Chemical mapping of a 207-nucleotide RNA with 2A3. The reactions ran in a buffer of 150 mM KOAc, 10 mM MgCl2 and 150 mM bicine (pH 8.5), at 24 C.
[RMDB]
RNA sequence: GGGAACGACUCGAGUAGAGUCGAAAAUGAAAAGUUCGCUUUUCAGCAGAGCGUACUACAACGACAUGCGUCAACAUCGAGGGUCUCCCAAAUAGGAGACCCGAUGAGAUGGUCGCGCAACAGCGUUGUAUCGCACUAAGGUACGUUCGCGUACCAACGAGGGGGAAAACUUCGGUUUUCCCCCUCGAAAAGAAACAACAACAACAAC
Reactivity to 2A3 in 0.01 (KOAc 150mM, MgCl2 10mM, bicine 150mM(pH8.5), 24C), signal-to-noise 1, nucleotides 027 to 156: u170g010a020a000a000a040g030u050u030c090g100c090u090u000u080u020c020a020g060c130a020g050a120g060c050g010u110a220c000u000a000c000a000a000c000g180a090c010a240u090g050c000g060u080c070a290a010c000a000u040c000g000a030g020g000g000u000c000u020c000c000c100a220a290a070u220a080g000g000a000g000a000c000c000c010g000a050u040g000a050g000a030u000g000g010u010c000g050c000g000c020a050a000c000a050g000c010g040u000u000g020u010a030u300c000g000c030a000c180u130a180a000g000g000u000a000c000g010u000u030c070g030c000g050u160a000c230c000a020a010